This 177-nucleotide RNA was probed chemically with DMS and 2A3.
The reactions ran in a buffer of 150 mM KOAc, 10 mM MgCl2 and 150 mM bicine (pH 8.5), at 24 C.
Values cover nucleotides 27 to 126.
For DMS the reverse transcriptase was MarathonRT.
The DMS profile rests on 1,022 reads.
In probing experiments dimethyl sulfate is read out at A N1 and C N3, which are open when not base-paired.
The 2A3 profile rests on 2,232 reads.

RNA sequence: GGGAACGACUCGAGUAGAGUCGAAAAGGAUUUUUCUUCGGAAAAAUCCAAACCCGAUGAAGCGGCACUUACACAGCUUCAUACACCUAAGAGUGCAAAUAAAAACCGUUCAGUUCGCUGAACGGAAGAUAGAUGAUGGGUUCGCCCAUCAUCUAUCAAAAGAAACAACAACAACAAC
Reactivity to DMS in 0.01 (KOAc 150mM, MgCl2 10mM, bicine 150mM(pH8.5), 24C), signal-to-noise 1, nucleotides 027 to 126: g000g000a000u000u000u000u000u000c000u000u010c180g000g000a000a010a000a010a010u000c000c000a030a060a070c000c010c000g010a050u000g000a040a010g030c010g030g040c030a010c100u000u010a110c180a040c150a110g010c010u000u000c000a010u010a120c130a090c110c090u010a110a090g000a040g010u010g020c070a090a090a070u000a060a040a120a140a110c010c010g000u000u000c000a000g030u000u020c250g000c000u000g000a020a000c000g000g000a030a020
Reactivity to 2A3 in 0.01 (KOAc 150mM, MgCl2 10mM, bicine 150mM(pH8.5), 24C), signal-to-noise 2, nucleotides 027 to 126: g000g010a010u010u000u000u000u010c020u040u070c150g010g020a010a010a010a010a000u020c000c000a010a010a120c000c000c000g030a040u040g020a000a000g030c030g030g050c080a020c070u100u140a030c140a000c000a090g000c000u020u000c000a020u050a050c100a050c010c030u110a150a030g160a050g030u030g030c020a020a160a010u180a020a070a020a040a020c000c010g000u010u000c000a010g000u020u080c140g000c090u010g000a000a000c000g000g010a000a010